[RMDB]
RNA sequence: GGGAACGACUCGAGUAGAGUCGAAAACACGGAAUAUAUUAUUCGAGUGCAAAGAGGAAUUUCUGUGGAAAACAGCUGGCAGAUUGUUAGAAGAUACAGUGACUUUGAUUUGCUUAACAACAGCUUAACUACUUUCUGUCUUCGGACAGAAAGUAGUAAAAGAAACAACAACAACAAC
Reactivity to 2A3 in 0.01 (KOAc 150mM, MgCl2 10mM, bicine 150mM(pH8.5), 24C), signal-to-noise 1, nucleotides 027 to 126: c000a000c070g040g060a040a010u130a000u090a080u300u040a060u140u100c030g010a070g050u080g030c040a060a090a060g070a050g090g030a040a040u040u010u000c040u070g030u030g020g000a000a170a050a040c030a020g010c020u010g040g030c000a030g040a160u070u010g050u010u060a100g010a160a000g020a020u070a180c020a070g120u040g100a020c050u040u000u090g040a060u060u120u050g030c030u050u040a080a010c020a000a000c000a020g000c000u050u020a000
Reactivity to DMS in 0.01 (KOAc 150mM, MgCl2 10mM, bicine 150mM(pH8.5), 24C), signal-to-noise 2, nucleotides 027 to 126: c030a060c080g050g010a070a040u000a170u020a140u010u000a050u010u000c030g000a110g030u010g020c060a040a090a120g000a170g010g020a080a050u000u000u000c020u010g020u000g000g000a070a090a080a050c120a070g000c060u010g000g000c050a090g000a100u000u000g020u010u000a080g000a050a070g000a110u020a030c080a020g000u010g010a110c040u020u000u010g000a070u000u000u000g020c030u010u010a040a040c180a040a080c080a100g030c040u000u000a080
Structure probing data (2A3 and DMS) for a 177-nucleotide construct. Values cover nucleotides 27 to 126.